Overview: An RNA of 177 nucleotides, treated with 2A3 and DMS and read out base by base. It was measured as part of the RMDB library TTRDEL. The DMS profile rests on 3,061 reads. For DMS the reverse transcriptase was MarathonRT. The RNA was probed in 150 mM KOAc, 10 mM MgCl2 and 150 mM bicine (pH 8.5) at 24 C. 2A3 adducts were read by reverse transcription with SuperScript II with manganese.
[RMDB]
RNA sequence: GGGAACGACUCGAGUAGAGUCGAAAAGAUAUGGAACGAUGGCCAGCUAUGAAGUCGGAAACGAUGGAGCUGACCAUUCGUUCCUAAGUCAAAUCCAGGUCCUGAAGUUCGCUUCAGGACCUGGAAAGAGUAUAACUGGGUUCGCCCAGUUAUACUCAAAAGAAACAACAACAACAAC
Reactivity to 2A3 in 0.01 (KOAc 150mM, MgCl2 10mM, bicine 150mM(pH8.5), 24C), signal-to-noise 3, nucleotides 027 to 126: g020a010u080a030u160g010g010a010a000c010g000a000u000g000g000c020c010a000g000c000u120a290u300g040a030a010g000u000c010g020g050a100a060a030c000g020a000u030g030g010a010g010c000u010g000a010c010c000a000u000u000c000g000u010u000c000c000u000a020a000g000u010c020a000a020a090u010c000c000a000g010g010u000c010c000u010g000a000a000g030u080u250c280g110c200u000u000c000a000g000g010a000c000c000u010g000g000a000a000a000
Reactivity to DMS in 0.01 (KOAc 150mM, MgCl2 10mM, bicine 150mM(pH8.5), 24C), signal-to-noise 3, nucleotides 027 to 126: g010a040u010a300u010g000g000a000a010c000g020a020u000g000g010c010c000a020g020c000u010a220u010g010a150a260g000u000c000g010g000a130a160a170c000g000a020u000g000g010a020g020c000u000g010a010c010c000a000u000u000c000g010u000u000c000c010u010a010a050g010u000c030a070a120a200u000c010c000a010g020g010u000c000c000u000g020a030a010g030u000u020c260g010c000u000u000c000a000g000g000a000c000c000u000g000g000a000a010a060